[RMDB]
RNA sequence: GGGAACGACUCGAGUAGAGUCGAAAAGGUCUUUAUUUAAUCUACCUAAAGAUCUCCUCACACGUAAGGUCAAUCGUUAAUGAAUACGGUCGUGGUUAGGAGACCGGGCAAUGGACGAGCUAACAGGUCCUGGAGGAAAGUUCGCUUUCCUCCAGGAAAAAGAAACAACAACAACAAC
Reactivity to 2A3 in 0.01 (KOAc 150mM, MgCl2 10mM, bicine 150mM(pH8.5), 24C), signal-to-noise 4, nucleotides 027 to 126: g070g010u020c010u060u170u080a180u120u230u230a230a070u080c050u090a080c030c000u010a050a070a030g040a090u020c030u010c000c000u100c010a020c000a010c050g090u080a080a090g130g010u090c080a080a060u030c050g040u040u160a150a040u300g100a030a040u170a090c000g000g050u040c030g060u070g110g090u070u070a030g080g050a050g030a030c020c010g040g010g000c080a070a090u090g010g020a020c000g010a020g000c040u040a100a050c010a050g040g090
Reactivity to DMS in 0.01 (KOAc 150mM, MgCl2 10mM, bicine 150mM(pH8.5), 24C), signal-to-noise 3, nucleotides 027 to 126: g000g000u030c010u000u010u020a020u010u060u000a080a030u020c080u070a050c090c120u000a010a030a030g000a030u000c010u020c020c020u000c150a080c200a080c150g010u030a120a060g000g000u000c100a090a060u000c060g010u000u010a100a080u020g000a120a080u030a060c040g030g030u000c040g020u030g010g010u010u030a120g000g040a150g000a030c040c020g000g000g000c040a050a040u020g000g010a020c010g020a040g000c090u020a030a050c110a100g010g000

This 177-nucleotide RNA was probed chemically with 2A3 and DMS. The DMS profile rests on 4,470 reads. For DMS the reverse transcriptase was MarathonRT. It was measured as part of the RMDB library OK1LIB.